[RMDB]
RNA sequence: GGGAACGACUCGAGUAGAGUCGAAAAAGCGUCGACGAACCUUCCAACCUUCCAAAGCAGCAAAAGCUGAACGUUCCAACCUUCCAAUCUACUCGAGAGGAGGAGGAGGAGGAGGAGGAGGAAUUAACUUUAGUGUUCAUUUCGAUGAACACUAAAGAAAAGAAACAACAACAACAAC
Reactivity to DMS in 0.01 (KOAc 150mM, MgCl2 10mM, bicine 150mM(pH8.5), 24C), signal-to-noise 3, nucleotides 027 to 126: a080g010c120g010u000c020g000a070c070g050a100a100c060c000u000u000c010c020a080a140c030c010u000u000c040c050a060a110a110g030c020a030g000c030a040a050a080a120g000c010u000g000a090a180c060g010u000u010c020c020a080a090c060c020u000u000c030c040a150a210u000c010u000a000c040u000c020g000a000g020a300g000g010a120g020g000a120g000g000a140g000g140a100g010g010a100g000g010a050g000g000a120g010g000a300a040u010u000a010a090
Reactivity to 2A3 in 0.01 (KOAc 150mM, MgCl2 10mM, bicine 150mM(pH8.5), 24C), signal-to-noise 3, nucleotides 027 to 126: a000g100c050g060u030c010g020a070c050g020a060a090c000c000u030u000c010c030a140a130c020c010u060u030c020c020a080a120a120g010c020a020g020c000a000a170a300a020g000c010u020g030a190a030c040g050u060u000c020c010a040a040c070c010u030u010c000c020a040a070u000c010u020a020c010u020c030g010a030g010a010g050g000a020g020g030a070g020g080a060g010g050a070g020g040a020g030g030a030g020g020a030g020g070a040a100u200u090a080a080